[RMDB]
RNA sequence: GGGAACGACUCGAGUAGAGUCGAAAAGGGCGGCGGUCCUCAGUGCUCUUACUCUUUUCUGUAAAGAGGAGACUGCUGGACUCUCCGCCCAAGCCGAGAUGGGCCUCAGUUCCGAGCGAAGAGCCGAACCGGGAAGAGGAAGCGCCCGAGAGGGAGCGACUUUUAAUACCUUCGGGUAUUAAAAGUCAAAAGAAACAACAACAACAAC
Reactivity to 2A3 in 0.01 (KOAc 150mM, MgCl2 10mM, bicine 150mM(pH8.5), 24C), signal-to-noise 1, nucleotides 027 to 156: g000g000g000c000g010g030c030g000g020u000c010c000u000c000a030g010u170g110c070u050c050u110u300a300c040u070c020u020u060u150u120c180u300g300u230a040a000a020g000a010g000g010a010g030a010c000u020g170c050u010g000g000a000c040u050c030u010c070c020g000c000c000c000a010a010g010c000c000g030a020g050a140u130g000g030g000c000c000u030c080a030g010u080u050c040c040g010a000g020c070g010a060a120g010a020g110c030c030g040a030a060c000c010g000g000g010a090a000g000a000g070g020a110a000g010c000g070c000c030c070g080a060g020a010g020g030g000a040g070c070